[RMDB]
RNA sequence: GGGAACGACUCGAGUAGAGUCGAAAAUGGACAGUUCGCUGUCCACUCGAGGGGGUCUAUUGGAGGAAUAGACAUGCUCUGAAGCCUCCACGGAGCAACAGCUAUUCUACCCACCCUGUAGACGGAGGCACCCAAAUUGGAGCAGUUCGCUGCUCAAAUAAGUAGGAUCUUUCGAGAUCCUACUUAUAAAAGAAACAACAACAACAAC
Reactivity to DMS in 0.01 (KOAc 150mM, MgCl2 10mM, bicine 150mM(pH8.5), 24C), signal-to-noise 3, nucleotides 027 to 156: u010g010g010a020c010a040g000u010u010c300g060c010u020g010u000c000c000a030c020u000c030g010a140g000g030g010g030g020u000c070u000a150u000u010g030g050a300g030g010a060a050u000a020g010a070c050a270u010g030c010u000c010u000g000a030a130g000c020c010u000c000c020a250c020g000g010a030g020c000a070a110c110a160g020c060u000a080u000u000c010u010a170c040c000c020a130c040c010c000u000g020u000a040g000a080c080g000g030a050g090g050c000a040c010c010c000a030a170a110u020u000g000g000a020g030c030a080g020u000u010c230g040c040u000g010c000u000c020a000a070
Reactivity to 2A3 in 0.01 (KOAc 150mM, MgCl2 10mM, bicine 150mM(pH8.5), 24C), signal-to-noise 7, nucleotides 027 to 156: u080g000g000a010c010a000g010u060u060c120g100c130u000g000u000c000c010a020c010u030c020g060a200g030g020g010g010g030u060c080u190a170u170u150g080g030a100g030g010a020a010u010a010g030a040c110a120u300g010c000u000c000u020g040a070a020g010c000c000u010c010c010a020c020g010g000a000g000c040a080a100c030a100g030c010u040a040u040u020c010u080a200c030c010c020a190c010c020c020u050g080u150a030g000a030c110g000g000a000g000g000c000a050c000c010c000a040a080a070u170u220g160g000a010g000c000a000g020u070u170c190g030c130u000g000c000u000c000a030a070

The record gives the reactivity of an RNA of 207 nucleotides to DMS and 2A3. The DMS profile rests on 5,556 reads. Source: RMDB library RNAMAK, as collected in RNAgym. 2A3 adducts were read by reverse transcription with SuperScript II with manganese.